This 207-nucleotide RNA was probed chemically with 2A3 and DMS. The data come from the RNA Mapping Database (RMDB), library OK3TST. For DMS, 5,427 sequencing reads were counted. For 2A3 the reverse transcriptase was SuperScript II with manganese. DMS adducts were read by reverse transcription with MarathonRT.
RNA sequence: GGGAACGACUCGAGUAGAGUCGAAAAGGGGUUAUAAGAUGCAAGAGCAGGUGCGUGCAUACGCAGGACAACAGACAUUGGUGGUGUCAAACACUGUGCUAAUGAGGAAUAAGGGGAAGGCGCAUGGGUCACAGUCUAGUGGAGAGCGCCAGAUGGGUAAUCUCAUUGUAUUCGUACAAUGAGAUUAAAAAGAAACAACAACAACAAC
Reactivity to 2A3 in 0.01 (KOAc 150mM, MgCl2 10mM, bicine 150mM(pH8.5), 24C), signal-to-noise 5, nucleotides 027 to 156: g040g020g000g010u080u060a120u060a190a090g060a060u110g030c060a040a040g010a020g060c030a020g000g070u030g030c020g010u000g030c020a040u090a160c040g010c020a000g010g050a030c020a090a010c020a080g080a050c020a110u070u080g010g010u060g010g030u010g050u050c000a010a110a000c040a000c030u040g010u040g060c020u080a070a070u110g040a030g040g050a060a070u100a110a040g000g000g000g030a030a050g020g000c020g000c030a030u070g060g030g030u060c020a010c000a070g070u070c060u150a060g010u010g050g010a050g010a010g040c000g010c010c000a020g030a050u070g020g000g030
Reactivity to DMS in 0.01 (KOAc 150mM, MgCl2 10mM, bicine 150mM(pH8.5), 24C), signal-to-noise 3, nucleotides 027 to 156: g000g020g050g030u000u000a100u000a080a100g010a130u000g000c060a100a100g000a160g000c070a170g040g060u000g020c050g000u000g020c070a140u000a080c050g020c040a130g010g030a130c050a060a060c070a120g000a070c050a130u020u000g040g000u000g020g010u000g010u000c060a090a050a100c060a080c040u010g010u000g000c020u020a060a090u010g000a110g010g000a070a090u020a090a090g000g020g010g000a070a060g000g010c040g040c060a080u020g010g000g010u000c030a090c020a090g000u000c060u000a100g060u030g010g000a130g010a120g020c040g000c000c030a040g020a070u000g000g000g010